[RMDB]
The record gives the reactivity of an RNA of 177 nucleotides to DMS and 2A3. Reactivities are given for positions 27 through 126. The RNA was probed in 150 mM KOAc, 10 mM MgCl2 and 150 mM bicine (pH 8.5) at 24 C. For DMS the reverse transcriptase was MarathonRT. For 2A3, 912 sequencing reads were counted.
RNA sequence: GGGAACGACUCGAGUAGAGUCGAAAACUUUUCAAAAAUCGGAAGAAAUUUGUACCUUUUGAGACGAAGGUUUGUAUACCGAGGAACGUGUUUAAGCGGAUACCGCAUCGCUCGGGGACGUCGUUCUACCUUCGACUACAUUCGUGUAGUCGAAGGUAAAAGAAACAACAACAACAAC
Reactivity to DMS in 0.01 (KOAc 150mM, MgCl2 10mM, bicine 150mM(pH8.5), 24C), signal-to-noise 1, nucleotides 027 to 126: c090u010u010u050u090c060a060a020a040a030a120u000c050g020g120a010a040g000a000a120a160u000u040u020g030u000a110c050c070u020u000u020u060g000a090g060a150c130g020a000a050g000g010u000u000u030g050u040a020u000a060c000c130g020a010g000g000a050a090c090g080u000g000u060u000u030a080a060g000c000g000g010a090u010a060c000c020g040c030a120u000c000g070c000u010c090g060g020g000g030a000c110g000u000c020g020u000u000c000u000
Reactivity to 2A3 in 0.01 (KOAc 150mM, MgCl2 10mM, bicine 150mM(pH8.5), 24C), signal-to-noise 2, nucleotides 027 to 126: c030u140u160u050u030c000a110a000a000a000a050u060c000g070g010a100a080g120a050a100a080u220u210u200g050u220a030c000c000u070u020u010u040g100a120g010a020c080g010a030a000g010g000u000u060u060g050u050a040u000a120c000c000g000a020g010g120a120a120c060g040u090g120u130u090u290a010a010g000c020g000g070a070u030a140c030c040g000c030a020u040c040g030c010u000c000g010g000g010g110a000c030g000u000c000g010u000u000c000u000